[RMDB]
RNA sequence: GGGAACGACUCGAGUAGAGUCGAAAAUACCUAAUGUAGGCGGUCGCCAGGUAAGGCGCACUCCACAUCGCGUCACCGUUCCGAUUGCCUCUUCAGGCCUUCGUCCGGUAACAACCGUUCAGUAUGAUCCCGCAGCACUAUCGUUCUUAUUGAACGCCACGGAUGGAUUCUUCGGAAUCCAUCCGUGAAAAGAAACAACAACAACAAC
Reactivity to 2A3 in 0.01 (KOAc 150mM, MgCl2 10mM, bicine 150mM(pH8.5), 24C), signal-to-noise 1, nucleotides 027 to 156: u080a020c020c000u040a110a050u080g110u210a110g000g070c030g050g000u010c000g000c060c000a060g020g060u100a090a110g040g000c020g000c100a020c030u070c040c040a170c060a180u100c170g030c010g020u010c010a000c050c000g000u110u010c030c000g000a010u010u000g010c000c000u010c020u010u010c090a000g000g000c000c010u040u030c030g000u000c000c040g000g020u060a070a040c050a050a010c020c010g010u010u040c040a000g020u010a090u110g080a080u060c050c000c000g000c090a010g120c000a020c040u120a100u090c050g030u030u000c010u000u300a300u210u160g050a020a000c010g000c050
Structure probing data (2A3) for a 207-nucleotide construct. Values cover nucleotides 27 to 156. Values are in units of 0.01, from 0 to 300, in steps of 10. The RNA was probed in 150 mM KOAc, 10 mM MgCl2 and 150 mM bicine (pH 8.5) at 24 C. For 2A3, 610 sequencing reads were counted. It was measured as part of the RMDB library PDB130.